[RMDB]
RNA sequence: GGGAACGACUCGAGUAGAGUCGAAAAGUACCUGAGUUUAUGAAAUCUACAAACAUUUAUGCAUACACUACAGCAGAGGCACUCUUCAUUAGCCCAGGGCCCUAGGAGUUACUUUCCUGAGAAGUUAACUCCAAUGUAACUUCGGUUACAUUGGAGUAAAAGAAACAACAACAACAAC
Reactivity to DMS in 0.01 (KOAc 150mM, MgCl2 10mM, bicine 150mM(pH8.5), 24C), signal-to-noise 3, nucleotides 027 to 126: g010u000a140c020c020u000g000a090g010u000u000u000a030u010g000a070a080a080u000c050u000a070c170a040a120a100c090a070u000u000u000a060u010g010c020a040u000a090c100a090c080u010a040c100a040g010c060a030g010a080g010g010c050a040c060u000c060u000u010c050a030u000u000a090g010c020c010c010a030g000g010g000c010c060c020u000a050g000g000a050g000u000u000a050c040u000u000u000c010c040u000g010a130g000a070a090g000u010u000a050
Reactivity to 2A3 in 0.01 (KOAc 150mM, MgCl2 10mM, bicine 150mM(pH8.5), 24C), signal-to-noise 2, nucleotides 027 to 126: g010u060a090c000c000u000g030a000g060u050u100u010a060u070g050a010a090a000u140c060u100a120c110a100a130a020c050a090u060u150u150a160u200g040c000a020u070a120c030a000c110u180a030c050a040g000c000a000g020a010g110g000c030a020c060u080c070u050u020c000a030u070u050a020g000c010c000c010a010g080g000g000c000c000c000u020a050g050g000a030g010u030u030a020c000u030u060u030c020c050u070g020a100g030a160a000g020u040u210a010